Source: RMDB library OK3TST, as collected in RNAgym.
An RNA of 207 nucleotides, treated with 2A3 and read out base by base.
For 2A3 the reverse transcriptase was SuperScript II with manganese.
Reactivities are given for positions 27 through 156.
2A3 is a SHAPE reagent: it acylates the 2'-hydroxyl of flexible nucleotides of all four kinds.
RNA sequence: GGGAACGACUCGAGUAGAGUCGAAAACAUAGAGCAAGACUUCUGAUCUGGCCGCACUUGUAUCCCACCGGCUGCAAAGACUAAACAUUGCAUUUGCUGCUCAAUAUUGGUUACCCUUCAGUGCUUCAUGGAGGCAGCAAGACUGCUAUUUAUAGAAACGGAUGAGUACUUUCGAGUACUCAUCCGUAAAAGAAACAACAACAACAAC
Reactivity to 2A3 in 0.01 (KOAc 150mM, MgCl2 10mM, bicine 150mM(pH8.5), 24C), signal-to-noise 1, nucleotides 027 to 156: c030a020u190a020g080a000g010c010a070a020g000a150c080u130u020c080u170g050a170u000c020u000g000g030c010c010g000c040a050c090u060u100g070u100a070u070c000c030c000a000c030c000g080g030c000u100g050c140a080a060a000g120a000c050u150a060a150a000c060a070u000u100g070c000a020u010u040u010g000c000u000g000c010u030c090a150a110u180a050u200u060g000g010u060u250a000c020c000c000u150u070c030a020g030u000g150c020u010u040c010a010u030g050g020a010g000g030c020a000g000c020a020a020g020a020c010u000g010c000u050a050u200u070u080a100u090a050g060a110a260